[RMDB]
The record gives the reactivity of an RNA of 177 nucleotides to DMS and 2A3. Conditions: 150 mM KOAc, 10 mM MgCl2 and 150 mM bicine (pH 8.5), 24 C. For 2A3 the reverse transcriptase was SuperScript II with manganese. Values cover nucleotides 27 to 126. The 2A3 profile rests on 14,551 reads.
RNA sequence: GGGAACGACUCGAGUAGAGUCGAAAAAAGAAGCUCUCUCAUUUAUUAGCAAACUUUUCUCCUUAUGAUUCUAUUUUGAUUGUCCUUUUGUUUGAGGAAGCAGCAUAUGGUGGUUAAGAGCAUAGGACAUAUGUAACAGAUUCGUCUGUUACAUAUGAAAAGAAACAACAACAACAAC
Reactivity to DMS in 0.01 (KOAc 150mM, MgCl2 10mM, bicine 150mM(pH8.5), 24C), signal-to-noise 9, nucleotides 027 to 126: a060a060g000a190a160g000c030u000c070u010c050u010c050a100u010u010u010a060u020u000a090g010c050a080a100a140c040u000u000u000u000c050u000c020c060u000u000a070u000g000a080u000u000c030u000a070u000u000u000u000g010a070u010u010g010u000c010c010u000u010u010u000g010u000u000u000g010a090g010g010a070a070g010c040a060g010c070a070u000a050u000g000g020u000g010g010u000u000a060a070g010a060g010c050a060u000a060g010g010a210
Reactivity to 2A3 in 0.01 (KOAc 150mM, MgCl2 10mM, bicine 150mM(pH8.5), 24C), signal-to-noise 9, nucleotides 027 to 126: a000a000g070a040a010g000c000u010c010u000c010u010c060a050u050u150u290a140u060u130a050g010c020a050a120a190c010u080u050u040u030c030u050c020c010u090u140a090u160g040a060u090u060c030u080a130u080u170u070u110g110a110u040u100g050u050c010c010u040u110u070u110g120u080u100u090g040a030g000g020a020a010g030c020a010g000c010a020u040a040u170g040g020u020g010g040u050u070a060a020g020a000g010c020a020u060a050g030g020a000